Source information
Chemical mapping of a 177-nucleotide RNA with DMS and 2A3.

RNA sequence: GGGAACGACUCGAGUAGAGUCGAAAAGAUAUGGAUAUAUACGAGUGAUGACCUACGUCGGAAACGACGUAGCAAGCUCAGUAUGAUAUCCUAAGUCAAAACCCCUACUGGUUCGCCAGUAGGGGAACCUCAUGAAGUGGUUCGCCACUUCAUGAGGAAAAGAAACAACAACAACAAC
Reactivity to DMS in 0.01 (KOAc 150mM, MgCl2 10mM, bicine 150mM(pH8.5), 24C), signal-to-noise 2, nucleotides 027 to 126: g000a030u000a300u010g010g000a040u010a000u010a030u000a070c000g010a050g030u010g000a130u000g010a170c300c000u000a010c010g000u000c000g000g000a100a080a290c000g000a000c000g000u000a000g000c020a030a060g010c000u000c010a110g000u000a000u000g000a040u010a000u000c000c000u000a060a200g010u000c030a120a050a150a170c000c020c000c000u000a010c010u000g010g000u000u020c300g000c000c000a000g000u000a000g000g000g010g000a000a000
Reactivity to 2A3 in 0.01 (KOAc 150mM, MgCl2 10mM, bicine 150mM(pH8.5), 24C), signal-to-noise 2, nucleotides 027 to 126: g030a020u060a020u180g010g010a000u000a000u020a000u000a060c000g000a000g030u090g180a300u170g020a020c040c000u010a000c020g000u000c010g010g030a050a090a060c000g010a000c000g000u010a000g030c010a120a170g010c020u010c150a050g000u000a000u110g300a030u000a000u030c000c000u000a130a020g040u010c030a020a060a130a300c000c000c000c000u000a000c000u000g070g000u060u030c170g060c110c000a000g000u000a000g010g000g020g000a000a030

The RNA was probed in 150 mM KOAc, 10 mM MgCl2 and 150 mM bicine (pH 8.5) at 24 C. In probing experiments dimethyl sulfate is read out at A N1 and C N3, which are open when not base-paired.